Chemical mapping of a 177-nucleotide RNA with DMS and 2A3. 2A3 is a SHAPE reagent: it acylates the 2'-hydroxyl of flexible nucleotides of all four kinds. For DMS the reverse transcriptase was MarathonRT. Reactivities are given for positions 27 through 126.

RNA sequence: GGGAACGACUCGAGUAGAGUCGAAAAUUGAUGGCAACAUCUCAACCAAUGCCGAGAAUACUGAGAGGCACACUGCAAGGGACGUGAAUCAAAACAUGCACACUCUUUUGGGCAUGGGUCCGCUACAUAUUAGUCGAGUUUUCGAACUCGACUAAUAAAAAGAAACAACAACAACAAC
Reactivity to DMS in 0.01 (KOAc 150mM, MgCl2 10mM, bicine 150mM(pH8.5), 24C), signal-to-noise 4, nucleotides 027 to 126: u010u000g010a050u010g000g010c150a120a100c030a030u000c030u000c140a090a220c130c040a060a060u000g010c030c020g000a100g010a080a100u010a110c150u000g010a120g000a230g000g010c040a050c080a080c120u000g000c060a090a120g040g020g000a060c090g020u010g010a080a050u000c110a020a060a120a090c050a040u000g000c030a060c070a070c300u000c160u000u000u010u010g010g000g020c010a030u000g000g000g020u000c030c020g010c080u000a070c140a100
Reactivity to 2A3 in 0.01 (KOAc 150mM, MgCl2 10mM, bicine 150mM(pH8.5), 24C), signal-to-noise 3, nucleotides 027 to 126: u080u060g030a020u040g000g060c000a000a000c010a070u010c000u040c050a050a030c000c010a020a200u060g000c000c020g080a070g050a150a100u200a180c110u130g030a070g020a070g100g040c020a010c010a000c010u060g030c050a070a110g060g020g060a030c030g060u050g090a030a030u100c070a020a040a020a050c010a020u060g030c040a020c010a000c070u110c000u110u130u190u140g030g020g010c020a020u020g030g000g050u010c000c030g000c030u060a050c040a100
Record summary:
The reactions ran in a buffer of 150 mM KOAc, 10 mM MgCl2 and 150 mM bicine (pH 8.5), at 24 C. It was measured as part of the RMDB library OK2TRN.